[RMDB]
RNA sequence: GGGAACGACUCGAGUAGAGUCGAAAAGAUUAGGUGUCCGUGAGGAAUCGAAACGAGGCACGAGAUUCCAAGGUCUCUGUAUCACGCCGUCUCGUGACGACUGGCUGGUCACAUUCGGCAUAACAAACGUAAGUAGUAGGUUCGCCUACUACUUACGAAAAGAAACAACAACAACAAC
Reactivity to 2A3 in 0.01 (KOAc 150mM, MgCl2 10mM, bicine 150mM(pH8.5), 24C), signal-to-noise 6, nucleotides 027 to 126: g050a040u090u130a070g000g070u010g000u000c010c010g000u030g040a080g050g120a050a090u120c040g010a060a030a040c050g010a110g020g030c010a000c020g010a040g010a040u070u000c030c010a030a010g070g000u020c010u000c010u050g100u110a070u080c060a010c120g000c000c000g000u000c000u040c100g000u000g000a000c010g010a020c050u050g030g000c030u030g020g000u010c000a010c000a020u010u010c000g010g000c020a020u060a080a070c090a110a060a010
Reactivity to DMS in 0.01 (KOAc 150mM, MgCl2 10mM, bicine 150mM(pH8.5), 24C), signal-to-noise 5, nucleotides 027 to 126: g010a070u010u010a080g010g020u020g000u000c000c010g020u000g010a190g000g010a100a070u020c050g010a050a120a110c040g000a110g000g000c040a050c060g000a130g000a030u000u000c010c030a090a130g010g010u000c030u000c040u000g010u010a050u000c080a100c130g010c020c000g000u010c010u000c130g030u000g010a030c000g000a090c060u010g000g010c040u010g000g000u000c000a010c010a020u000u020c000g000g020c010a060u020a060a080c190a050a060a130
The record gives the reactivity of an RNA of 177 nucleotides to 2A3 and DMS.